The data come from the RNA Mapping Database (RMDB), library M2RFPK. Structure probing data (2A3) for a 207-nucleotide construct. Values cover nucleotides 27 to 156. The 2A3 profile rests on 936 reads.
[RMDB]
RNA sequence: GGGAACGACUCGAGUAGAGUCGAAAAACUAAUCCAAAGCAAGUAUAGGAGAACAGGUUAUUAACUAUUUUUAGGCAGAUAAAAAAUAGUAUUUGACAGUCUAACACUAACUGAACAAUAAGUGUUAAAAAGUCGUCUCUGUUCGCAGAGACGACAAGCUAAAGAUGGCGUUCGCGCCAUCUUUAGCAAAAGAAACAACAACAACAAC
Reactivity to 2A3 in 0.01 (KOAc 150mM, MgCl2 10mM, bicine 150mM(pH8.5), 24C), signal-to-noise 1, nucleotides 027 to 156: a000c060u090a090a040u020c040c030a060a000a020g020c010a030a000g040u060a050u080a120g020g020a040g030a120a050c050a060g090g070u110u000a080u110u100a190a000c010u010a030u020u010u000u020u050a060g080g000c030a010g050a160u080a070a080a000a000a000a000u060a010g020u040a150u060u060u040g040a040c000a000g000u000c010u010a000a000c010a000c000u010a010a000c000u010g070a020a010c030a040a000u030a020a000g010u000g030u030u040a020a080a030a040a010g010u000c000g000u020c000u000c000u000g040u050u060c140g030c020a010g000a000g000a000c000g010a000c000a000a010